[RMDB]
RNA sequence: GGGAACGACUCGAGUAGAGUCGAAAAGGUUUCAAUAACGUUCUGUAGUUGCUGCAUCCUGUUCUUUCCUGAUGUUAUACCCUUCGUACUUGAAGCCAUUGCAGUGUGAGCAAUAACGUCAAUGAUCCUGUACAGUUGGGUUCGCCCAACUGUACAGAAAAGAAACAACAACAACAAC
Reactivity to DMS in 0.01 (KOAc 150mM, MgCl2 10mM, bicine 150mM(pH8.5), 24C), signal-to-noise 4, nucleotides 027 to 126: g020g000u010u000u010c030a060a070u010a090a120c090g000u010u010c080u000g010u000a090g020u000u000g010c010u000g020c060a080u000c040c050u020g020u000u000c070u000u000u000c020c030u010g020a060u010g030u010u000a090u000a070c080c020c040u010u000c060g020u010a070c130u000u000g000a040a090g030c080c080a070u010u000g020c040a140g000u010g020u010g010a060g040c100a060a040u010a050a060c060g000u010c050a040a070u000g000a120u010c060
Reactivity to 2A3 in 0.01 (KOAc 150mM, MgCl2 10mM, bicine 150mM(pH8.5), 24C), signal-to-noise 2, nucleotides 027 to 126: g050g000u020u050u060c060a060a040u100a050a030c040g030u080u030c050u100g180u090a100g040u030u090g000c060u020g020c000a050u040c010c000u060g110u170u050c030u050u010u030c010c000u050g030a060u070g050u090u030a060u090a150c000c010c020u050u060c040g040u080a110c020u090u110g030a030a000g000c000c060a080u030u100g000c050a030g020u030g020u060g120a030g000c030a060a050u020a050a000c020g060u010c000a040a070u110g020a030u080c000